[RMDB]
RNA sequence: GGGAACGACUCGAGUAGAGUCGAAAACUGAGAACUCAUCCAUCACUUUUUCAAUGAGCAUUUCGUUGCUUUUGGACUGUAGUAACAUAGCUAUUCCCCUUUCGGCGAGACUUGGCGUGUUUCUGUCCAGACAGUGAAACUUCGGUUUCACUGUCUGAAAAGAAACAACAACAACAAC
Reactivity to 2A3 in 0.01 (KOAc 150mM, MgCl2 10mM, bicine 150mM(pH8.5), 24C), signal-to-noise 3, nucleotides 027 to 126: c030u030g060a010g010a160a000c050u020c000a060u060c010c000a020u080c020a070c060u010u070u060u190u160c060a100a120u140g040a080g000c000a050u010u050u250c120g050u100u010g020c020u020u030u030u050g000g050a050c100u020g000u030a040g030u000a110a040c020a030u070a090g020c000u060a060u120u110c020c020c010c000u000u200u020c000g000g010c000g030a040g030a070c060u010u120g060g000c070g000u000g010u010u040u020c030u000g050u010c020
Reactivity to DMS in 0.01 (KOAc 150mM, MgCl2 10mM, bicine 150mM(pH8.5), 24C), signal-to-noise 1, nucleotides 027 to 126: c070u010g000a080g010a100a070c060u010c020a080u020c030c020a100u000c090a080c060u000u000u000u050u000c040a040a050u000g000a050g020c040a040u000u040u030c080g010u000u060g030c050u030u000u000u000g010g000a040c100u010g020u000a010g040u030a040a040c030a020u000a080g050c000u000a090u020u000c000c020c000c100u000u000u010c060g020g000c080g000a090g000a060c080u000u010g010g010c080g000u000g030u000u000u000c010u000g000u000c130